The record gives the reactivity of an RNA of 207 nucleotides to DMS. For DMS, 4,452 sequencing reads were counted. The reactions ran in a buffer of 150 mM KOAc, 10 mM MgCl2 and 150 mM bicine (pH 8.5), at 24 C. Reactivities are given for positions 27 through 156.
RNA sequence: GGGAACGACUCGAGUAGAGUCGAAAAGAGUUCUGUUCGCAGAACUCAAAAACCGUAGGCCUGGAUCGACUUUUGACGCGUCGCCCAUUCGAAAGAGUGGGUCGACGCGAUAAGUCGGCCAGGCCUAAACGGAAAAAGGUCCGUUUCGACGGACCAACAUGCUUAACGAAUUCGUUCGUUAAGCAUGAAAAGAAACAACAACAACAAC
Reactivity to DMS in 0.01 (KOAc 150mM, MgCl2 10mM, bicine 150mM(pH8.5), 24C), signal-to-noise 2, nucleotides 027 to 156: g000a040g030u000u000c000u000g010u000u000c300g030c000a020g010a010a030c000u010c010a020a080a100a090a100c000c000g030u010a020g010g000c000c000u000g010g010a100u000c010g020a030c010u000u000u020u020g020a290c090g030c010g010u000c000g030c000c000c000a010u000u000c000g010a170a120a240g000a030g040u000g010g000g010u010c000g020a000c000g040c000g000a000u000a010a010g000u000c000g010g000c000c000a020g010g000c000c000u010a000a010a030c000g010g010a040a090a090a120a180g010g000u020c000c000g030u000u000u010c160g000a060c000g010g010a010c000c000a020a080